[RMDB]
RNA sequence: GGGAACGACUCGAGUAGAGUCGAAAAGGUUAAUAGAAUAAUCAAACAAUUACACGUGUUGUGUUACAUGUACCUCAUUAUGAUGUAUAGGGACCAAAUUUUAGCAGUAGAAAUAGAUGAUCUUUUUAUACCCUUCCAUUUUCGAAUGGAAGGGUAUAAAAGAAACAACAACAACAAC
Reactivity to 2A3 in 0.01 (KOAc 150mM, MgCl2 10mM, bicine 150mM(pH8.5), 24C), signal-to-noise 1, nucleotides 027 to 126: g000g090u190u040a050a090u050a070g210a040a070u230a160a000u190c060a090a000a090c000a020a070u260u290a000c180a000c020g000u050g070u070u070g000u090g000u000u160a050c050a050u000g000u000a040c000c000u110c000a050u160u250a070u270g140a020u050g000u000a000u000a000g010g030g030a000c010c000a140a160a080u130u270u000u120a090g110c120a020g000u090a160g000a120a000a000u210a000g000a000u120g000a000u090c040u000u000u000u000u000